[RMDB]
RNA sequence: GGGAACGACUCGAGUAGAGUCGAAAAACGACAGGGAUCUAUAUGUACAGCCGAGAAGGAUUUGGCCCCUACAUAGGAUUUACCAUUGGGUGGGGAUAUUGGUUAUGCCAGAUCUUUGGUAAUGUCGAACAAACUUGAGUUUCGACUCAAGUUUGUUAAAAGAAACAACAACAACAAC
Reactivity to 2A3 in 0.01 (KOAc 150mM, MgCl2 10mM, bicine 150mM(pH8.5), 24C), signal-to-noise 2, nucleotides 027 to 126: a000c000g060a020c000a020g080g040g030a010u030c000u080a270u040a040u300g030u060a040c020a010g000c030c030g020a020g020a190a050g070g070a060u030u040u040g050g000c030c030c000c000u020a020c010a020u070a020g030g030a020u090u090u160a100c020c020a020u010u060g080g010g060u120g020g000g030g040a000u010a060u090u120g110g040u110u030a040u110g040c000c000a020g010a070u010c000u040u040u030g020g000u050a120a100u090g010u030c030g040
Reactivity to DMS in 0.01 (KOAc 150mM, MgCl2 10mM, bicine 150mM(pH8.5), 24C), signal-to-noise 4, nucleotides 027 to 126: a170c060g020a020c020a030g000g000g000a050u010c020u000a110u000a060u000g010u010a050c300a110g000c020c010g000a060g020a170a110g010g010a120u010u010u000g010g000c000c050c110c130u000a040c040a040u000a130g000g010a180u010u010u000a070c010c010a150u020u000g000g010g010u020g010g000g000g000a050u000a050u000u010g020g000u000u000a080u000g000c000c050a020g010a100u000c010u000u000u010g010g000u000a040a040u000g020u000c030g010
Structure probing data (2A3 and DMS) for a 177-nucleotide construct. Conditions: 150 mM KOAc, 10 mM MgCl2 and 150 mM bicine (pH 8.5), 24 C. 2A3 is a SHAPE reagent: it acylates the 2'-hydroxyl of flexible nucleotides of all four kinds. For DMS, 3,623 sequencing reads were counted. For DMS the reverse transcriptase was MarathonRT.